[RMDB]
Notes:
The data come from the RNA Mapping Database (RMDB), library M2PK90. This 177-nucleotide RNA was probed chemically with DMS.
RNA sequence: GGGAACGACUCGAGUAGAGUCGAAAAUACAUCCGGCAGCGGUCAGGUAAGGCAAACCACGGUUUGGAGGGUGGUUCUCGGCUGAGACCGCCGCGACCUCUAUCUCCGGUCCAAAAUAAAAAUUUAAUUCAAUUGAGACAUUCGUGUCUCAAUUGAAAAAAGAAACAACAACAACAAC
Reactivity to DMS in 0.01 (KOAc 150mM, MgCl2 10mM, bicine 150mM(pH8.5), 24C), signal-to-noise 1, nucleotides 027 to 126: u020a120c140a150u000c000c020g000g010c270a010g040c180g020g000u010c030a100g030g000u010a090a040g040g000c050a050a060a050c020c040a100c120g000g020u000u010u010g020g020a030g000g010g030u000g010g000u020u020c090u000c100g000g020c110u010g000a020g000a020c020c040g000c010c020g010c050g020a000c020c010u010c070u000a080u020c060u020c020c080g060g010u020c020c060a020a090a050a070u020a020a010a160a030a100u000u000u000a000a130

Reactivities are given for positions 27 through 126.